Structure probing data (2A3 and DMS) for a 177-nucleotide construct.
RNA sequence: GGGAACGACUCGAGUAGAGUCGAAAAAUGGCCGUUCUUAACACGUGGAGUGAUCUGUCUGGUCAAAUCUGAUAACGCGUGAGAGGUGAGUGGUUUUUAACCAGACGAUGUGUGUAAGCACAAGGAACUCCGAUUACAGAUUCGUCUGUAAUCGGAGAAAAGAAACAACAACAACAAC
Reactivity to 2A3 in 0.01 (KOAc 150mM, MgCl2 10mM, bicine 150mM(pH8.5), 24C), signal-to-noise 5, nucleotides 027 to 126: a000u110g050g010c030c000g050u060u000c030u070u040a110a030c020a000c030g040u040g050g060a070g030u060g070a100u040c040u080g120u020c020u080g020g010u040c000a050a020a040u050c050u100g100a150u130a240a040c030g050c010g060u110g060a120g010a030g150g040u050g030a090g050u070g040g030u040u010u020u060u090a050a020c010c000a000g000a020c040g020a110u060g030u000g000u000g040u090a100a040g010c020a020c020a050a020g050g000a070a030
Reactivity to DMS in 0.01 (KOAc 150mM, MgCl2 10mM, bicine 150mM(pH8.5), 24C), signal-to-noise 4, nucleotides 027 to 126: a060u010g010g000c010c010g000u010u010c030u010u010a110a100c050a060c070g000u010g000g000a110g010u020g010a080u010c050u010g000u010c060u010g010g020u000c080a030a030a050u030c030u000g000a100u040a080a110c060g000c050g010u000g010a090g010a110g000g000u010g020a100g010u010g000g010u010u000u000u020u010a110a110c020c000a040g000a070c060g020a080u010g010u000g000u010g000u050a100a140g010c050a030c040a060a070g000g010a070a160

The RNA was probed in 150 mM KOAc, 10 mM MgCl2 and 150 mM bicine (pH 8.5) at 24 C.